[RMDB]
RNA sequence: GGGAACGACUCGAGUAGAGUCGAAAACUCUUGCACAGAAUCACCUUUCUAUAAUAACCAGUGCAAGAAGGGUUAUUAUACCAUUUAAUGUGCCGAGGCCAGGCGGAGUACGAUCGAGGGUACAGCAAAAACGUGAAGUACUUCGGUACUUCACGAAGCUAGAGACCUUGUUCGCAAGGUCUCUAGCAAAAGAAACAACAACAACAAC
Reactivity to 2A3 in 0.01 (KOAc 150mM, MgCl2 10mM, bicine 150mM(pH8.5), 24C), signal-to-noise 2, nucleotides 027 to 156: c010u000c000u000u000g000c000a010c000a010g070a080a060u190c060a130c040c010u170u250u120c120u060a020u040a000a050u030a010a000c000c000a000g000u000g000c000a000a010g010a000a000g010g000g000u010u000a020u020u000a050u010a060c000c040a100u070u150u220a160a110u250g090u090g030c000c040g040a020g000g050c030c030a090g060g010c050g050g000a150g020u100a070c120g030a190u080c040g010a080g080g000g010u060a060c020a030g030c020a060a060a060a000a000c010g000u000g010a000a000g020u010a010c030u030u030c100g010g000u000a010c000u010u000c030a000c000g010a010a000